RNA sequence: GGGAACGACUCGAGUAGAGUCGAAAAGGCAGACUUGCGAACGCCAGCUUGUGCCGCAGGAAAAGCGAAAGCGUUGGUCGAUAGACUCUGACGAUAAAACGGCUGACGAUGUUCUCAUGCAUCGGUCGCCUAUGUCCAAGUUCGCUUGGACAUAGGCAAAAGAAACAACAACAACAAC
Reactivity to 2A3 in 0.01 (KOAc 150mM, MgCl2 10mM, bicine 150mM(pH8.5), 24C), signal-to-noise 3, nucleotides 027 to 126: g110g000c020a010g010a090c030u040u060g020c030g020a150a020c040g010c030c000a020g020c050u130u160g070u120g080c010c010g000c010a010g010g060a040a120a030a010g020c020g040a040a020a030g070c030g030u040u050g010g010u000c020g020a120u070a090g030a030c020u060c050u140g060a030c060g020a020u080a090a100a010a020c020g020g010c020u050g010a010c010g020a030u050g040u040u000c090u040c080a050u150g000c020a060u040c010g110g060u060c040
Reactivity to DMS in 0.01 (KOAc 150mM, MgCl2 10mM, bicine 150mM(pH8.5), 24C), signal-to-noise 3, nucleotides 027 to 126: g000g000c000a040g010a130c060u020u000g020c030g010a080a100c110g020c030c070a100g010c110u000u020g010u000g030c090c020g010c070a070g020g000a060a070a160a110g010c030g010a070a080a120g010c030g000u000u000g010g040u000c010g010a120u010a120g000a100c150u010c050u010g040a070c080g000a050u000a030a090a090a110c080g020g010c040u010g000a030c010g000a030u010g000u000u000c100u010c090a110u000g010c100a030u010c030g010g010u000c070
This 177-nucleotide RNA was probed chemically with 2A3 and DMS. For 2A3, 3,177 sequencing reads were counted.